An RNA of 177 nucleotides, treated with DMS and 2A3 and read out base by base.
RNA sequence: GGGAACGACUCGAGUAGAGUCGAAAACAAUACGUCCAUGCUCGUUAAGUACCACAUCAACGGGCAGUUGUGCUGCGGACGAAGGUAUUAGCCGCGGUGCAAGGACGGGAAUAAUACCUUCGACAAACAGCAAGCAUGGAUUCGUCCAUGCUUGCUGAAAAGAAACAACAACAACAAC
Reactivity to DMS in 0.01 (KOAc 150mM, MgCl2 10mM, bicine 150mM(pH8.5), 24C), signal-to-noise 1, nucleotides 027 to 126: c160a010a080u000a120c150g080u000c000c000a090u000g030c000u000c000g000u000u010a130a130g000u000a080c130c180a140c200a000u060c140a010a040c000g000g000g000c000a060g000u000u000g040u000g000c010u000g070c010g000g000a060c080g000a000a000g000g100u000a000u000u000a190g030c120c040g000c000g000g000u000g020c060a040a070g000g000a140c000g000g030g000a070a040u010a060a050u000a010c000c000u080u000c000g020a090c300a010a100a250
Reactivity to 2A3 in 0.01 (KOAc 150mM, MgCl2 10mM, bicine 150mM(pH8.5), 24C), signal-to-noise 2, nucleotides 027 to 126: c050a000a120u180a170c000g000u000c000c000a010u010g000c000u000c010g000u000u030a220a020g060u130a230c040c060a060c010a230u100c070a000a020c000g000g000g000c000a000g000u010u020g000u000g000c000u010g000c000g020g040a040c010g010a000a000g010g040u010a040u020u110a060g000c000c000g000c000g000g000u000g000c000a000a040g000g010a020c010g000g000g010a100a010u240a020a000u020a030c000c010u000u030c050g010a030c040a040a080a000
It was measured as part of the RMDB library OK1LIB. For DMS the reverse transcriptase was MarathonRT. Values cover nucleotides 27 to 126. For DMS, 1,200 sequencing reads were counted.